[RMDB]
The record gives the reactivity of an RNA of 177 nucleotides to DMS and 2A3.
For DMS the reverse transcriptase was MarathonRT.
Conditions: 150 mM KOAc, 10 mM MgCl2 and 150 mM bicine (pH 8.5), 24 C.
RNA sequence: GGGAACGACUCGAGUAGAGUCGAAAAACUUUGGAAACUAGUGAAUGUGGUGUCAAAAAAGGCGUAAAUUAAACGCUUUGCAGCCUUUUCCUGCCCUUAAAUUUGAUACCUUUGGUGUAGGAGCUGCCACUCGUCUGUAGUUCGCUACAGACGAGUGAAAAGAAACAACAACAACAAC
Reactivity to DMS in 0.01 (KOAc 150mM, MgCl2 10mM, bicine 150mM(pH8.5), 24C), signal-to-noise 2, nucleotides 027 to 126: a050c040u000u000u000g010g000a070a100a050c050u010a010g000u020g000a120a060u010g020u000g000g030u010g020u020c060a000a090a010a070a010a000g000g000c000g010u000a030a050a110u010u080a080a060a040c050g000c020u000u020u000g010c030a070g000c080c170u040u010u040u000c040c000u000g010c020c010c010u010u050a010a060a090u000u010u010g000a080u000a070c270c120u000u000u000g000g000u040g040u010a000g030g010a080g000c030u000g000c040
Reactivity to 2A3 in 0.01 (KOAc 150mM, MgCl2 10mM, bicine 150mM(pH8.5), 24C), signal-to-noise 2, nucleotides 027 to 126: a000c030u000u010u090g100g010a070a040a060c020u000a000g050u020g210a080a060u100g040u000g060g000u000g040u040c030a040a040a040a040a040a040g000g000c010g000u000a070a010a160u190u290a210a240a000c040g000c000u000u000u010g000c010a000g020c000c000u010u000u160u050c000c000u000g030c000c000c010u030u070a080a050a160u190u120u110g090a020u140a170c000c000u000u050u130g070g000u200g000u010a000g010g010a030g000c000u030g000c000